An RNA of 207 nucleotides, treated with DMS and read out base by base. Conditions: 150 mM KOAc, 10 mM MgCl2 and 150 mM bicine (pH 8.5), 24 C. For DMS, 2,159 sequencing reads were counted. It was measured as part of the RMDB library RNAMAK. DMS adducts were read by reverse transcription with MarathonRT.
RNA sequence: GGGAACGACUCGAGUAGAGUCGAAAACGCUGGGUCGCUCCUUUAGGGGAGCCCGUCACAGAGAAUACUGAAGCGCGCACGGUAUUCGACGAAGUGACGAGCGCUCCCCUAAAAGAGCGACCUGUGCUGAAGCGCGCACGGCAACCGAAAGGUGCGAGUUCAAGAUAAACUUCGGUUUAUCUUGAACAAAAGAAACAACAACAACAAC
Reactivity to DMS in 0.01 (KOAc 150mM, MgCl2 10mM, bicine 150mM(pH8.5), 24C), signal-to-noise 1, nucleotides 027 to 156: c050g010c010u000g020g060g070u010c010g000c000u000c000c020u000u000u010a020g000g000g000g010a030g020c000c010c010g030u000c010a020c000a120g010a170g000a070a030u010a010c000u000g000a090a080g050c060g020c010g030c010a300c000g020g050u000a010u010u010c000g020a240c070g000a100a170g030u000g020a040c000g010a050g000c080g010c080u000c000c010c030c000u000a010a000a010a020g010a020g010c000g020a000c010c030u000g010u000g010c000u010g020a070a070g070c040g040c000g030c060a300c050g000g000c050a060a130c010c030g000a120a190a180g000g000u010g030c040g000a190